[RMDB]
Chemical mapping of a 177-nucleotide RNA with 2A3 and DMS. It was measured as part of the RMDB library OK2TST. DMS adducts were read by reverse transcription with MarathonRT. The reactions ran in a buffer of 150 mM KOAc, 10 mM MgCl2 and 150 mM bicine (pH 8.5), at 24 C.

RNA sequence: GGGAACGACUCGAGUAGAGUCGAAAAAGUUCACAUGUAAUUUGGCAGAGCUACAGCUUGCUGCAGUGCAGUUUCCCUAUCCUACCAGCAGGUGGAACUCUUGAGCUGCCUUUUACUCUCGUCAGCCACAAUGCGAAUGGUUCGCCAUUCGCAUUGUAAAAGAAACAACAACAACAAC
Reactivity to 2A3 in 0.01 (KOAc 150mM, MgCl2 10mM, bicine 150mM(pH8.5), 24C), signal-to-noise 2, nucleotides 027 to 126: a010g050u100u100c080a050c020a090u080g020u160a090a140u070u070u170g030g020c020a000g020a030g040c040u060a070c050a050g050c030u020u070g010c020u010g070c050a040g080u030g080c050a020g020u030u060u080c000c010c010u050a070u120c030c020u030a070c010c010a010g070c020a030g050g010u030g020g070a050a050c030u060c050u140u060g010a050g040c020u000g000c030c020u060u070u000u040a040c020u020c010u020c070g090u030c040a030g060c040c010
Reactivity to DMS in 0.01 (KOAc 150mM, MgCl2 10mM, bicine 150mM(pH8.5), 24C), signal-to-noise 2, nucleotides 027 to 126: a080g010u010u000c050a040c080a080u000g020u000a050a030u000u010u000g020g030c030a050g020a070g020c070u000a040c090a140g010c020u010u000g020c020u000g010c080a060g010u000g010c080a080g010u000u000u000c020c020c000u000a120u000c070c060u000a090c140c040a040g020c060a030g000g010u010g010g000a060a070c060u000c060u000u000g020a080g010c030u000g010c030c020u010u010u010u010a030c050u010c050u000c100g000u000c080a090g010c080c150